[RMDB]
RNA sequence: GGGAACGACUCGAGUAGAGUCGAAAAUGCAUGCCGAGUUGGUAACAGAACUCGUAAAUCCACUGUUGCAACUUUCUAUAGUUGCCAAUGACGAAACCUACGGGGAAUACGCUCUCGCCGCGUAAGCGGUGCUAGCCUUCCUUCUGGUAGCUUCGGCGACUUUAGUAAUGUUCGCAUUACUAAAGUCAAAAGAAACAACAACAACAAC
Reactivity to 2A3 in 0.01 (KOAc 150mM, MgCl2 10mM, bicine 150mM(pH8.5), 24C), signal-to-noise 8, nucleotides 027 to 156: u160g010c070a030u120g030c010c000g000a010g010u030u020g030g020u030a030a020c010a020g020a030a010c010u020c040g090u120a020a020a020u040c060c020a050c070u020g020u030u040g000c000a010a030c020u090u240u200c120u270a120u110a170g000u010u020g000c020c010a110a200u140g030a020c030g040a090a040a040c020c010u030a040c060g000g000g000g050a000a020u090a080c040g000c010u000c000u000c000g010c000c000g010c010g070u120a140a050g000c000g000g000u000g000c000u000a000g010c000c010u010u010c010c000u070u090c050u100g080g000u010a020g010c030u030u030c020g040g000c030
Reactivity to DMS in 0.01 (KOAc 150mM, MgCl2 10mM, bicine 150mM(pH8.5), 24C), signal-to-noise 3, nucleotides 027 to 156: u020g040c070a090u010g030c070c000g000a080g000u000u000g000g010u000a080a130c100a190g010a050a090c010u000c060g000u010a030a080a140u000c090c050a110c050u000g000u000u000g020c000a090a050c030u000u000u010c100u000a120u000a060g010u000u010g010c020c060a070a070u010g000a080c000g000a050a030a040c030c010u010a050c060g020g010g000g010a040a030u010a100c120g000c010u000c050u010c020g040c020c010g040c010g000u000a120a200g020c030g040g040u000g000c040u000a020g020c070c080u000u000c010c000u000u010c040u010g050g020u000a030g000c020u000u000c020g030g000c130
Chemical mapping of a 207-nucleotide RNA with 2A3 and DMS. For DMS the reverse transcriptase was MarathonRT. It was measured as part of the RMDB library ARCHII. The RNA was probed in 150 mM KOAc, 10 mM MgCl2 and 150 mM bicine (pH 8.5) at 24 C. Values cover nucleotides 27 to 156.